[RMDB]
Structure probing data (2A3 and DMS) for a 177-nucleotide construct.
It was measured as part of the RMDB libraries RFM100 and RFMREP.
Values cover nucleotides 27 to 126.
For 2A3 the reverse transcriptase was SuperScript II with manganese.
RNA sequence: GGGAACGACUCGAGUAGAGUCGAAAAGUGCCUGGUCUUCUGGAGCUGAGGACUCGGGAAACCAUGCAAUUGAGGCAAGCCUUGGGCUGCUUUAGAGGCGCUGACAUCCGAGGAGACUUCUCCUGGAUGCUACGUUACAGUUCGCUGUAACGUAGCAAAAAGAAACAACAACAACAAC
Reactivity to 2A3 in 0.01 (KOAc 150mM, MgCl2 10mM, bicine 150mM(pH8.5), 24C), signal-to-noise 9, nucleotides 027 to 126: g080u050g020c010c010u030g000g020u020c060u040u010c010u090g140g020a040g000c030u060g110a110g070g100a120c000u000c020g020g010g010a020a010a010c000c000a030u110g010c020a020a160u080u100g020a040g020g040c080a090a110g020c020c030u120u130g090g060g010c010u010g000c000u050u020u030a090g010a020g030g000c020g000c040u020g030a040c010a060u010c010c010g060a020g000g020a040g040a130c060u170u020c010u100c010c000u010g010g010a010
Reactivity to DMS in 0.01 (KOAc 150mM, MgCl2 10mM, bicine 150mM(pH8.5), 24C), signal-to-noise 6, nucleotides 027 to 126: g030u000g010c010c010u000g010g010u000c080u000u000c010u000g020g030a030g020c030u020g020a190g010g010a280c010u000c010g000g000g010a030a040a030c030c010a070u020g000c100a100a120u020u010g010a030g010g000c020a050a080g000c000c010u040u010g030g010g030c000u000g010c010u000u000u010a050g010a110g000g010c030g010c040u000g000a120c120a070u010c010c000g000a060g000g000a110g000a220c160u020u000c000u000c000c000u000g010g000a130
The reactions ran in a buffer of 150 mM KOAc, 10 mM MgCl2 and 150 mM bicine (pH 8.5), at 24 C.